[RMDB]
RNA sequence: GGGAACGACUCGAGUAGAGUCGAAAAUCUUCCAGAUCAUUCUAGAUAUUUCCAGAAAUCAUUCGUGAAAUCUAACUAGGAGUAGUCUGUAAACAAUGUGUUUCACACAGAUACAAUUCAUAAACGAUGAGAAGACAAGGACACUUCAUGAAUGAAAGUCGGAAGAGGAAUUCGUUCCUCUUCCGACAAAAGAAACAACAACAACAAC
Reactivity to 2A3 in 0.01 (KOAc 150mM, MgCl2 10mM, bicine 150mM(pH8.5), 24C), signal-to-noise 2, nucleotides 027 to 156: u030c000u040u030c020c020a000g040a050u080c060a080u080u050c040u110a040g030a040u040a170u100u050u030c030c020a050g130a080a160a040u070c020a070u000u130c040g020u090g070a080a170a210u000c030u060a040a080c090u010a040g030g070a030g030u030a020g040u090c020u020g030u030a050a050a050c040a050a120u090g120u030g080u060u100u180c100a090c000a000c000a110g030a010u080a060c040a110a160u000u090c030a050u220a160a090a080c030g020a050u100g030a090g030a120a060g030a040c020a010a030g050g000a000c000a000c010u040u040c020a000u090g030a010a020u080g020a040a000a000